[RMDB]
RNA sequence: GGGAACGACUCGAGUAGAGUCGAAAAACUGGAAUUUCUUCAGAGGUACCCAAGGUUUCAAUCUUGUUGAAGUGAAGGUAAGAGGUAUCCGUCUUGGAACGACCGUUAAUCGGGUUCGGAUUGUCGCCCAUCUUCUCUUUUUCGAAAGAGAAGAUGGAAAAGAAACAACAACAACAAC
Reactivity to DMS in 0.01 (KOAc 150mM, MgCl2 10mM, bicine 150mM(pH8.5), 24C), signal-to-noise 4, nucleotides 027 to 126: a090c020u010g010g010a140a110u010u010u010c080u010u000c060a060g020a120g000g020u010a040c020c010c020a110a160g010g010u010u010u010c050a050a070u010c070u000u010g010u010u000g020a060a080g010u000g000a120a090g010g010u000a070a110g010a090g000g010u000a040u010c020c030g010u000c070u010u010g020g010a070a080c060g000a110c020c030g000u010u000a060a120u000c040g000g000g000u000u000c030g010g010a120u000u000g000u000c070g010c150
Reactivity to 2A3 in 0.01 (KOAc 150mM, MgCl2 10mM, bicine 150mM(pH8.5), 24C), signal-to-noise 3, nucleotides 027 to 126: a010c050u060g060g040a050a080u120u180u000c020u050u050c040a070g040a050g110g040u050a020c040c000c020a060a130g070g030u040u160u090c050a040a060u060c020u140u260g100u150u160g100a040a030g060u020g120a040a030g060g000u060a070a060g040a040g070g040u020a030u050c030c020g070u020c040u030u080g130g020a100a060c020g070a040c070c040g020u030u150a080a070u260c030g000g070g000u070u090c010g060g040a050u020u120g080u070c050g070c070